[RMDB]
RNA sequence: GGGAACGACUCGAGUAGAGUCGAAAAAAAAAGAGCGUACAUCUCUCUCAGACUGUACGACAGUCUGACUCUCUCGUACGCUUGUUCUACGAGAGAGAGAGAGCGUUGGAACAAGUGUGAAAAAAAACUUACAAGUUUAGUUCGCUAAACUUGUAAGAAAAGAAACAACAACAACAAC
Reactivity to 2A3 in 0.01 (KOAc 150mM, MgCl2 10mM, bicine 150mM(pH8.5), 24C), signal-to-noise 4, nucleotides 027 to 126: a000a000a000a000a000g080a010g030c060g020u060a030c080a200u020c020u000c000u020c010u000c020a000g010a010c010u020g020u140a160c090g080a070c130a000g000u010c000u000g020a050c000u000c000u000c000u000c000g000u010a020c070g010c080u030u080g040u060u010c000u000a010c010g000a010g000a000g000a010g000a000g010a000g000a000g010c040g020u060u060g060g010a060a010c020a050a060g060u080g010u080g160a100a020a020a010a000a000a000a010
Reactivity to DMS in 0.01 (KOAc 150mM, MgCl2 10mM, bicine 150mM(pH8.5), 24C), signal-to-noise 4, nucleotides 027 to 126: a050a050a050a100a110g000a040g020c050g000u000a100c080a110u000c010u000c000u010c080u000c010a010g010a010c010u000g000u010a120c280g010a140c010a010g000u000c010u000g000a200c090u000c000u000c000u000c010g010u000a010c100g000c070u010u010g010u010u010c050u000a020c010g010a010g000a020g000a040g010a060g000a040g010a070g010c170g010u000u000g020g000a030a030c040a020a060g010u000g010u010g000a010a000a000a080a050a050a090a140